An RNA of 177 nucleotides, treated with 2A3 and read out base by base. The RNA was probed in 150 mM KOAc, 10 mM MgCl2 and 150 mM bicine (pH 8.5) at 24 C. Source: RMDB library OK1LIB, as collected in RNAgym.
RNA sequence: GGGAACGACUCGAGUAGAGUCGAAAAGAUGUUCGGUUCCGGCUCGGUGUUCGCGCUGGACGGCGACGACCACCGGCGGCGGCGCCGGCUACUGGCGCCGUUUUUCCACGGCAAGAGCAUGAAGAACCGCUGGGAGGGAUUUCGAUCCCUCCCAGCGAAAAGAAACAACAACAACAAC
Reactivity to 2A3 in 0.01 (KOAc 150mM, MgCl2 10mM, bicine 150mM(pH8.5), 24C), signal-to-noise 1, nucleotides 027 to 126: g170a060u030g000u000u150c000g010g180u240u110c020c050g020g000c100u120c200g000g020u020g040u000u000c000g000c000g020c220u160g180g300a210c220g100g090c050g100a300c000g000a000c050c020a000c000c110g010g040c000g000g040c000g000g050c040g010c010c000g050g000c020u130a110c150u160g070g000c000g000c000c000g000u000u000u000u090u000c000c000a000c000g040g030c030a150a000g000a000g110c000a010u090g000a090a040g090a070a020c030